Structure probing data (DMS and 2A3) for a 177-nucleotide construct. The DMS profile rests on 9,780 reads. For DMS the reverse transcriptase was MarathonRT. The RNA was probed in 150 mM KOAc, 10 mM MgCl2 and 150 mM bicine (pH 8.5) at 24 C.
[RMDB]
RNA sequence: GGGAACGACUCGAGUAGAGUCGAAAAACUUCCUACUUCGGUAGGAAGUAAAAGUAGAAAAGUUGGUGCUUAGACCACGCCCUCUACCGUAAUAAAAGAUAAACCCUUAGCACUUCGGUGCUAAGAAGGGAUAGUAUAGAUUCGUCUAUACUAUCCCAAAAGAAACAACAACAACAAC
Reactivity to DMS in 0.01 (KOAc 150mM, MgCl2 10mM, bicine 150mM(pH8.5), 24C), signal-to-noise 6, nucleotides 027 to 126: a060c000u000u000c000c000u000a010c000u000u020c180g020g000u000a000g010g010a000a010g000u000a010a030a090a100g010u000a020g000a030a020a030a020g050u010u000g010g010u000g020c300u010u020a130g010a050c020c010a010c010g000c010c020c030u000c010u000a010c010c070g010u000a090a070u000a060a060a060a090g000a130u000a080a090a130c090c040c010u000u000a000g010c010a000c000u000u020c170g030g000u000g000c000u000a000a000g000a090a100
Reactivity to 2A3 in 0.01 (KOAc 150mM, MgCl2 10mM, bicine 150mM(pH8.5), 24C), signal-to-noise 7, nucleotides 027 to 126: a010c000u000u000c000c000u000a000c000u010u040c090g090g000u000a000g010g020a000a000g000u000a000a000a000a010g000u000a000g020a010a040a010a000g050u110u040g030g000u070g070c180u230u130a040g080a080c000c010a000c010g000c000c010c000u020c000u010a020c020c040g060u060a070a100u060a120a240a030a010g100a030u150a090a140a070c020c010c000u000u000a000g000c000a000c010u030u030c240g070g000u000g000c000u000a000a000g000a010a060